[RMDB]
Structure probing data (2A3 and DMS) for a 177-nucleotide construct. Reactivities are given for positions 27 through 126. It was measured as part of the RMDB library TTRDEL. Conditions: 150 mM KOAc, 10 mM MgCl2 and 150 mM bicine (pH 8.5), 24 C. For 2A3, 13,357 sequencing reads were counted.

RNA sequence: GGGAACGACUCGAGUAGAGUCGAAAAGAUAUGGAAUUCGCUUUUGACGAACAUAUUUCGGAAACGAAAUAUACGUUCGAUAAGCGAUUCCUAAGUCAAAAGCAACAGUGGUUCGCCACUGUUGCAACUAUCUCGAUAGGUUCGCCUAUCGAGAUAGAAAAGAAACAACAACAACAAC
Reactivity to 2A3 in 0.01 (KOAc 150mM, MgCl2 10mM, bicine 150mM(pH8.5), 24C), signal-to-noise 6, nucleotides 027 to 126: g010a010u040a020u070g000g040a010a020u270u130c020g000c030u120u110u110u200g300a280c100g000a010a000c010a010u010a000u010u010u000c010g000g010a020a040a030c010g000a000a010a000u020a010u060a080c180g000u000u010c040g020a020u020a020a000g000c000g000a000u000u010c000c000u010a070a010g030u010c030a090a000a070a130g010c000a000a000c000a000g000u010g100g070u090u160c300g090c110c000a000c000u010g000u000u000g010c000a000a000
Reactivity to DMS in 0.01 (KOAc 150mM, MgCl2 10mM, bicine 150mM(pH8.5), 24C), signal-to-noise 4, nucleotides 027 to 126: g020a030u000a300u020g000g000a010a010u010u010c010g010c000u000u000u000u010g010a180c110g010a010a010c010a050u000a010u000u000u000c010g020g010a090a080a130c000g000a000a010a010u000a000u010a080c290g020u010u000c000g010a090u000a010a010g010c000g000a030u000u000c000c010u000a040a120g010u000c020a050a070a120a150g010c000a000a010c010a000g020u010g010g010u000u010c190g010c020c000a010c010u000g000u000u010g010c000a010a030